[RMDB]
RNA sequence: GGGAACGACUCGAGUAGAGUCGAAAACAAAUGUGCGUUUCCGCUUUUCUGACUGACUCAGUCUUAUUGGGAUCCUCCAUCCAUCCUUAUUGACUGAGUCAGUCUUAUUGGAUGGAUGGAAGGCUAAGCUUUCUUAGCCAUUCGUGGCUAAGAAAGCAAAAGAAACAACAACAACAAC
Reactivity to DMS in 0.01 (KOAc 150mM, MgCl2 10mM, bicine 150mM(pH8.5), 24C), signal-to-noise 1, nucleotides 027 to 126: c120a060a080a050u000g010u000g010c040g030u000u000u020c070c040g010c080u010u000u000u000c070u000g060a020c010u000g010a010c000u020c000a010g010u000c040u000u000a140u010u010g000g020g000a170u010c040c010u000c000c000a020u000c010c000a020u000c000c000u000u000a080u000u000g010a020c000u000g010a040g000u000c010a000g020u000c030u000u020a060u030u000g010g000a010u000g000g000a030u000g020g030a000a020g000g000c210u010a050a210

Structure probing data (DMS) for a 177-nucleotide construct. The reactions ran in a buffer of 150 mM KOAc, 10 mM MgCl2 and 150 mM bicine (pH 8.5), at 24 C.